[RMDB]
RNA sequence: GGGAACGACUCGAGUAGAGUCGAAAAGAUAUGGACGUUGUUGGGAGCGGGUCGGAAACGACCCAGCUUUGAUCAACACGACGUCCUAAGUCAAACCAUCGUAUGCAGUUCGCUGCAUACGAUGGAAGUACGUUUACGACUUCGGUCGUAAACGUACAAAAGAAACAACAACAACAAC
Reactivity to 2A3 in 0.01 (KOAc 150mM, MgCl2 10mM, bicine 150mM(pH8.5), 24C), signal-to-noise 1, nucleotides 027 to 126: g020a020u060a070u160g010g000a000c020g010u000u010g040u040u050g050g050g020a010g030c020g030g010g000u000c020g040g010a100a060a030c010g010a010c010c000c010a010g020c000u140u080u080g130a100u180c040a010a020c000a000c180g020a000c000g000u000c000c010u040a090a010g040u050c050a040a050a110c010c000a000u010c000g020u010a000u000g000c000a000g010u040u110c250g110c220u020g000c000a010u030a000c010g000a000u000g010g000a020a000
Reactivity to DMS in 0.01 (KOAc 150mM, MgCl2 10mM, bicine 150mM(pH8.5), 24C), signal-to-noise 1, nucleotides 027 to 126: g040a040u000a300u010g000g010a000c010g000u000u000g030u000u000g010g000g000a020g040c000g000g000g010u000c000g010g010a030a070a150c000g000a010c000c010c000a030g040c000u000u000u020g000a140u010c020a060a080c090a030c300g000a050c020g010u000c000c000u000a020a050g000u000c060a170a100a210c010c000a000u000c000g010u000a010u020g000c030a050g030u000u020c260g000c000u000g000c000a040u050a020c010g000a010u010g020g000a030a020